[RMDB]
RNA sequence: GGGAACGACUCGAGUAGAGUCGAAAACGCCAGCGCCUGCAGGCGACGGAGCUCGACCACGUCAAACUCGGCACCGCUUUCCACGCGGUCCAGCACGGCCUCCACGUCGGCGGCCCAGCGCUCGUGGAUCAACAUCUAUGUUCGCAUAGAUGUUGAUAAAAGAAACAACAACAACAAC
Reactivity to 2A3 in 0.01 (KOAc 150mM, MgCl2 10mM, bicine 150mM(pH8.5), 24C), signal-to-noise 9, nucleotides 027 to 126: c030g030c010c010a030g010c010g010c020c030u120g030c050a040g020g020c010g020a020c040g030g020a030g020c050u060c080g080a100c030c030a070c060g080u070c080a080a090a100c050u040c050g030g000c090a030c020c010g010c020u090u130u050c060c020a050c070g010c010g020g000u020c010c010a020g020c040a020c050g030g000c010c000u020c010c010a050c040g100u090c050g030g010c000g010g000c000c020c010a030g020c020g010c010u040c020g030u030g030g030
Reactivity to DMS in 0.01 (KOAc 150mM, MgCl2 10mM, bicine 150mM(pH8.5), 24C), signal-to-noise 8, nucleotides 027 to 126: c090g010c030c020a070g020c040g000c060c050u030g010c070a080g010g010c050g000a050c070g000g000a100g030c050u000c130g000a070c040c040a090c060g010u000c100a070a080a110c100u010c060g030g000c110a040c010c020g010c040u000u020u020c100c110a110c160g010c050g000g000u000c020c060a040g010c060a090c230g000g000c050c010u000c040c020a070c090g020u010c100g000g000c040g010g000c080c020c030a130g000c040g000c020u000c020g010u010g010g000